[RMDB]
RNA sequence: GGGAACGACUCGAGUAGAGUCGAAAAGCCGUGGCAGUGCGACCAGUGAGCAUAUUCGCCAUCUGGGCAGUGAAGUGAAUGUCGGCGGCGCGCUGACGGCCAACGUCGACAAUCUGACGGCGGUAGAGCCGAUCAUAAUGUUCGCAUUAUGAUCGGCAAAAGAAACAACAACAACAAC
Reactivity to DMS in 0.01 (KOAc 150mM, MgCl2 10mM, bicine 150mM(pH8.5), 24C), signal-to-noise 5, nucleotides 027 to 126: g010c020c000g010u000g020g020c050a080g010u010g010c010g010a190c040c020a040g020u010g010a160g040c030a100u010a140u010u000c140g010c020c040a070u000c010u010g000g000g010c070a070g010u000g000a120a090g020u010g000a050a080u010g000u000c000g010g010c020g000g010c300g010c140g000c030u000g020a120c220g000g000c020c040a050a210c020g020u000c000g020a020c040a040a080u000c040u000g000a050c010g000g000c030g000g000u010a080g020a200
Reactivity to 2A3 in 0.01 (KOAc 150mM, MgCl2 10mM, bicine 150mM(pH8.5), 24C), signal-to-noise 4, nucleotides 027 to 126: g000c000c020g000u010g070g000c040a030g080u020g040c020g090a160c040c010a030g010u030g070a140g010c040a030u120a300u300u260c100g000c030c000a020u020c020u040g030g050g000c070a080g040u040g100a110a030g060u040g120a100a050u050g010u020c030g000g000c010g020g020c050g000c030g000c040u120g100a090c040g070g000c020c000a050a030c010g000u010c000g000a020c030a030a070u010c040u070g030a030c020g010g040c030g050g030u100a070g040a020